[RMDB]
RNA sequence: GGGAACGACUCGAGUAGAGUCGAAAAUAUGCAAAUCAUCGCAGAGCGAACGAAAGUGCUUGUAAAAUCAAGUGCUAGUCAUUAAUUAUCAAUGGCGAGAUAAACGAUAUGCGGGAAACUCCUAAAGCAUAUAAUACGAAACGACAUCGUCGAAAACCUACCCCCUCAGAUUCGUCUGAGGGGGUAGAAAAGAAACAACAACAACAAC
Reactivity to DMS in 0.01 (KOAc 150mM, MgCl2 10mM, bicine 150mM(pH8.5), 24C), signal-to-noise 1, nucleotides 027 to 156: u000a090u000g010c000a120a110a050u010c060a060u000c040g000c040a080g030a070g060c010g030a090a100c040g030a070a070a090g120u000g030c000u000u000g010u000a040a120a090a230u010c010a000a030g080u030g000c020u000a100g000u000c030a030u000u000a170a170u000u000a100u010c100a000a120u000g020g000c000g010a100g000a100u080a070a010a080c010g000a140u000a010u000g000c090g000g000g000a030a030a130c000u000c010c060u000a100a160a170g000c000a000u290a050u000a180a160u010a060c070g030a010a020a240c060g000a060c010a060u000c000g000u000c030g030a090a000a120a120c130
Reactivity to 2A3 in 0.01 (KOAc 150mM, MgCl2 10mM, bicine 150mM(pH8.5), 24C), signal-to-noise 3, nucleotides 027 to 156: u120a050u060g010c030a040a030a130u060c070a050u100c030g000c030a030g050a020g140c010g030a020a020c040g040a160a130a010g000u010g020c010u020u020g010u110a110a070a070a100u150c010a010a000g010u000g010c010u010a020g010u000c000a000u020u060a140a100u190u230a030u110c060a010a000u010g010g000c000g000a030g040a130u250a210a030a010c030g020a020u000a020u140g000c000g000g040g020a120a080a060c070u100c000c010u120a080a020a060g010c010a010u000a000u030a040a150u170a030c060g060a110a070a000c040g110a010c050a130u170c060g050u060c010g050a020a210a140a030c110